Source: RMDB library OK1LIB, as collected in RNAgym. The record gives the reactivity of an RNA of 177 nucleotides to DMS and 2A3. For 2A3 the reverse transcriptase was SuperScript II with manganese. The 2A3 profile rests on 5,964 reads. For DMS the reverse transcriptase was MarathonRT. DMS (dimethyl sulfate) methylates the pairing face of unpaired adenines and cytosines.
RNA sequence: GGGAACGACUCGAGUAGAGUCGAAAAGAAGGAGAUGAAAGCGACUUUAGAAUCGGCUAACUGAGCAGACAGAUACAGACGGCAAGUAUCGUCGCCAGAGAUACAGUCGCAACUAGCCGCAGGAGAACACCAUGAUGGAUUUCGAUCCAUCAUGGUGAAAAGAAACAACAACAACAAC
Reactivity to DMS in 0.01 (KOAc 150mM, MgCl2 10mM, bicine 150mM(pH8.5), 24C), signal-to-noise 4, nucleotides 027 to 126: g020a100a030g010g040a100g000a030u030g010a090a080a120g010c000g000a040c000u000u030u010a050g010a170a140u000c050g000g000c030u040a090a240c020u000g000a090g030c050a120g030a010c010a120g020a020u020a010c020a120g000a120c140g010g000c090a050a110g000u000a000u000c000g000u000c010g000c000c010a010g000a070g010a130u020a060c160a020g020u000c000g040c020a060a090c080u010a090g030c050c050g000c090a080g000g000a140g000a070a120
Reactivity to 2A3 in 0.01 (KOAc 150mM, MgCl2 10mM, bicine 150mM(pH8.5), 24C), signal-to-noise 6, nucleotides 027 to 126: g100a050a010g080g040a060g010a040u090g090a090a040a000g010c000g010a010c010u100u100u080a060g040a140a090u070c040g040g010c060u040a080a070c010u020g010a020g080c070a090g020a010c000a050g000a010u010a010c010a010g210a090c040g100g060c090a160a020g000u020a000u010c000g000u000c000g000c020c000a020g010a010g000a010u070a070c040a010g000u010c010g010c000a020a040c010u010a010g020c020c010g000c030a030g000g130a090g000a060a020